An RNA of 207 nucleotides, treated with DMS and 2A3 and read out base by base. Reactivities are given for positions 27 through 156. The reactions ran in a buffer of 150 mM KOAc, 10 mM MgCl2 and 150 mM bicine (pH 8.5), at 24 C. Values are in units of 0.01, from 0 to 300, in steps of 10. For DMS the reverse transcriptase was MarathonRT. The 2A3 profile rests on 3,847 reads. The data come from the RNA Mapping Database (RMDB), library M2RFPK. 2A3 adducts were read by reverse transcription with SuperScript II with manganese.
RNA sequence: GGGAACGACUCGAGUAGAGUCGAAAACCAGCAGCCAUGACCUACCAGGCUGCGGUGCGGCUCGCCGCACAGGUCAUCCCUCAUCGGGCGCGUCCUGCGUCCUUCCACGCCAAGCCACAAGGGAUCUAAAACACGUUGGGCUUCGGCCCAACGUGAACUUAACCAUAUUGUUCGCAAUAUGGUUAAGAAAAGAAACAACAACAACAAC
Reactivity to DMS in 0.01 (KOAc 150mM, MgCl2 10mM, bicine 150mM(pH8.5), 24C), signal-to-noise 1, nucleotides 027 to 156: c010c000a110g030c040a030g000c000c010a120u010g020a140c060c040u000a140c120c010a140g020g030c000u000g020c000g010g030u000g010c000g000g010c030u000c250g030c030c010g070c010a000c000a040g020g020u010c030a130u000c010c000c010u020c060a050u000c040g000g020g010c020g000c020g000u010c100c070u010g030c030g010u010c020c020u000u010c020c050a090c040g000c010c030a060a150g000c040c030a080c060a060a070g000g010g040a100u000c020u010a080a000a090a160c000a030c020g020u000u010g000g010g010c010u010u000c300g040g040c000c000c000a000a000c020g030u000g000a030a040
Reactivity to 2A3 in 0.01 (KOAc 150mM, MgCl2 10mM, bicine 150mM(pH8.5), 24C), signal-to-noise 2, nucleotides 027 to 156: c010c010a000g000c000a000g010c030c000a180u140g010a040c010c000u110a260c100c070a010g000g000c010u000g000c010g000g010u010g000c010g010g000c030u090c210g150c030c000g000c010a000c020a000g010g020u010c020a070u030c000c000c010u040c050a140u170c070g030g010g010c020g000c020g040u150c030c100u130g010c010g040u010c000c050u060u020c000c000a020c020g010c010c020a070a040g010c000c000a030c020a030a020g030g010g000a020u020c040u110a060a040a010a030c010a000c010g000u000u000g000g000g000c000u020u040c140g110g000c000c000c000a000a000c000g000u000g000a000a000